[RMDB]
RNA sequence: GGGAACGACUCGAGUAGAGUCGAAAAAGCAAACAGGAUUAGAUACCCUGGUAGUCCAUGCUGUAAACGAUGAUUGCUAGGUGUGGGUGGACUGACCCCAUCCGUGCCGGAGUUAACACAAUAAGCAGACUGUUGCGUAUUUCGAUACGCAACAGUCAAAAGAAACAACAACAACAAC
Reactivity to 2A3 in 0.01 (KOAc 150mM, MgCl2 10mM, bicine 150mM(pH8.5), 24C), signal-to-noise 2, nucleotides 027 to 126: a000g160c150a080a070a020c050a090g000g040a060u090u030a030g030a110u220a110c000c000c030u040g050g040u030a000g010u000c020c010a060u050g000c020u120g030u190a050a080a090c080g080a170u040g030a110u070u060g020c000u000a030g000g010u000g030u020g060g000g000u020g000g000a020c040u070g130a060c050c000c000c000a000u000c000c000g030u020g000c000c000g000g030a000g030u080u120a040a010c070a000c000a090a180u200a150a030g100c040a020
Reactivity to DMS in 0.01 (KOAc 150mM, MgCl2 10mM, bicine 150mM(pH8.5), 24C), signal-to-noise 2, nucleotides 027 to 126: a060g000c060a090a090a150c040a050g020g000a020u000u000a080g000a120u020a170c080c000c000u000g010g000u000a110g000u000c040c060a090u000g030c020u000g000u000a090a050a120c200g020a080u000g000a110u000u000g000c030u000a140g010g010u010g030u000g000g000g020u000g000g000a120c110u000g010a150c300c090c000c000a010u000c020c010g000u000g000c010c000g000g020a050g000u000u010a060a040c080a070c120a060a090u000a050a090g000c080a110
The data come from the RNA Mapping Database (RMDB), library OK2TRN. An RNA of 177 nucleotides, treated with 2A3 and DMS and read out base by base. The RNA was probed in 150 mM KOAc, 10 mM MgCl2 and 150 mM bicine (pH 8.5) at 24 C. 2A3 adducts were read by reverse transcription with SuperScript II with manganese.